[RMDB]
Structure probing data (DMS and 2A3) for a 177-nucleotide construct. The 2A3 profile rests on 1,654 reads. DMS (dimethyl sulfate) methylates the pairing face of unpaired adenines and cytosines. It was measured as part of the RMDB library M2PK90. The RNA was probed in 150 mM KOAc, 10 mM MgCl2 and 150 mM bicine (pH 8.5) at 24 C. 2A3 adducts were read by reverse transcription with SuperScript II with manganese.
RNA sequence: GGGAACGACUCGAGUAGAGUCGAAAAGGAAACAAGUCAAGUAACUGCUCCAAUCAGUUUAAUAUCAGUGACGUCCUCUAUCCGAGGACAAUAUAUUAAAUGGAUAAAAGGAGCAGGAGUAAAAAAAACAGAAGAAUAGAUUCGUCUAUUCUUCUGUAAAAGAAACAACAACAACAAC
Reactivity to DMS in 0.01 (KOAc 150mM, MgCl2 10mM, bicine 150mM(pH8.5), 24C), signal-to-noise 3, nucleotides 027 to 126: g010g010a110a080a040c050a110a090g000u000c090a080a120g020u000a070a150c000u000g000c000u000c000c000a070a060u000c010a110g030u020u000u000a000a010u000a000u010c130a130g030u010g020a130c250g000u000c000c000u000c000u000a110u020c300c170g000a010g010g000a000c010a010a030u010a030u000a000u000u000a010a000a010u010g000g000a020u010a040a070a080a260g000g000a020g000c000a000g000g020a050g030u000a000a000a000a110a070a100a100
Reactivity to 2A3 in 0.01 (KOAc 150mM, MgCl2 10mM, bicine 150mM(pH8.5), 24C), signal-to-noise 2, nucleotides 027 to 126: g060g010a050a040a060c070a070a110g140u180c050a010a070g010u060a150a030c010u000g000c000u020c000c000a010a030u000c000a030g000u040u000u000a030a010u020a000u080c130a080g090u030g210a090c080g000u000c000c010u000c010u080a180u160c110c070g000a000g000g010a010c010a000a010u010a000u000a010u030u010a010a010a030u020g000g010a020u050a150a220a090a200g000g000a000g080c000a000g000g000a000g010u070a070a190a100a070a030a000a030